Conditions: 150 mM KOAc, 10 mM MgCl2 and 150 mM bicine (pH 8.5), 24 C. An RNA of 177 nucleotides, treated with 2A3 and DMS and read out base by base. 2A3 adducts were read by reverse transcription with SuperScript II with manganese. High DMS reactivity at an A or C suggests that its Watson-Crick edge is free.
[RMDB]
RNA sequence: GGGAACGACUCGAGUAGAGUCGAAAACUGUGUGCUGUACUGAUGUAUUUGUGUUUACCUACAUUUUCUAUGGCACCUGUUGAAUUUUAUGAAGACCGCAUCUUGGACUUUAAAGUUCUUGAUAAUGGAUUCACAGCUAGUUCGCUAGCUGUGAAUCAAAAGAAACAACAACAACAAC
Reactivity to 2A3 in 0.01 (KOAc 150mM, MgCl2 10mM, bicine 150mM(pH8.5), 24C), signal-to-noise 1, nucleotides 027 to 126: c010u010g050u030g000u000g140c010u020g000u030a010c010u010g000a010u000g010u030a060u060u200u100g230u030g120u080u250u080a100c000c010u040a030c020a050u030u050u000u000c010u010a030u000g000g000c000a000c000c020u000g000u020u030g020a050a040u050u040u050u130a060u080g060a050a020g060a050c000c000g000c040a010u030c000u000u010g030g000a010c010u100u100u200a180a300a010g000u000u000c010u030u000g030a030u040a150a070u100g070
Reactivity to DMS in 0.01 (KOAc 150mM, MgCl2 10mM, bicine 150mM(pH8.5), 24C), signal-to-noise 1, nucleotides 027 to 126: c000u000g000u010g030u010g000c000u010g010u000a000c080u000g000a010u000g000u000a000u000u010u020g020u010g020u040u000u010a040c130c230u000a000c010a000u020u000u000u000c150u000a010u000g000g000c000a000c010c030u000g000u010u050g000a050a060u030u000u000u000a090u000g010a110a100g000a230c060c040g020c200a020u010c080u030u010g010g010a020c000u000u010u020a050a070a030g000u000u000c000u000u000g000a040u000a080a130u030g020